[RMDB]
RNA sequence: GGGAACGACUCGAGUAGAGUCGAAAAGGGCCAUGUGUGGUGGCUCACACUUAUAUCCAGCACUGUGGGAAGCCGAGACAGGUGGAUUGCUGGAACUCAGGAGUUCGAGACCAACCUAGGCAACAUGGCAAAACCCUGUCUCUACGAAAAAUAUAAACCCAUAUGUACCGUUCGCGGUACAUAUGGGAAAAGAAACAACAACAACAAC
Reactivity to 2A3 in 0.01 (KOAc 150mM, MgCl2 10mM, bicine 150mM(pH8.5), 24C), signal-to-noise 1, nucleotides 027 to 156: g060g000g010c010c000a020u010g110u000g030u060g040g020u010g020g000c010u040c000a020c000a010c000u090u120a030u060a040u230c010c000a030g100c010a000c020u130g000u070g150g000g000a030a030g020c130c050g030a020g020a020c020a060g020g010u040g000g110a020u050u050g040c030u020g000g040a020a040c030u000c050a020g020g130a040g060u080u060c000g010a070g060a120c000c010a050a100c000c010u060a040g100g070c010a030a050c030a170u090g000g000c030a020a030a030a030c000c000c000u000g040u030c030u000c000u010a000c010g050a020a090a000a110a020u030a020u000a030a010a040